Chemical mapping of a 177-nucleotide RNA with 2A3 and DMS. For 2A3, 1,474 sequencing reads were counted. For 2A3 the reverse transcriptase was SuperScript II with manganese. The reactions ran in a buffer of 150 mM KOAc, 10 mM MgCl2 and 150 mM bicine (pH 8.5), at 24 C.

[RMDB]
RNA sequence: GGGAACGACUCGAGUAGAGUCGAAAACUGCAGAAAUUAAUGGCACACCUAACGCUAGUGAUGUUGCCGCACCACCUAGCAAUCCAAAGAUAAAUAAGAUAUCUACAACUUUACCUACAAAUUUAUCAAUUCUAUUCGAGUUCGCUCGAAUAGAAUUAAAAGAAACAACAACAACAAC
Reactivity to 2A3 in 0.01 (KOAc 150mM, MgCl2 10mM, bicine 150mM(pH8.5), 24C), signal-to-noise 3, nucleotides 027 to 126: c030u050g020c030a030g130a080a180a070u140u070a160a110u260g020g000c030a010c000a020c010c010u030a100a010c040g050c090u030a020g040u050g090a180u050g030u120u090g000c000c010g000c000a010c020c000a020c010c020u010a020g000c010a020a050u060c020c010a040a130a010g040a030u120a070a150a030u100a090a010g020a010u120a010u150c000u070a040c010a060a020c050u130u270u090a050c010c000u060a050c060a130a200a060u130u140u200a140u230c030
Reactivity to DMS in 0.01 (KOAc 150mM, MgCl2 10mM, bicine 150mM(pH8.5), 24C), signal-to-noise 2, nucleotides 027 to 126: c070u020g000c060a020g020a110a120a090u000u000a060a090u010g010g000c040a070c060a050c060c060u010a150a070c190g010c050u010a050g010u000g000a060u010g020u000u010g020c130c090g010c010a010c070c020a020c120c010u000a030g050c040a100a100u000c090c050a030a100a100g010a040u000a030a030a040u020a070a080g010a050u010a020u000c000u000a040c040a040a040c050u000u000u000a140c050c020u020a090c080a040a050a160u000u000u000a030u010c060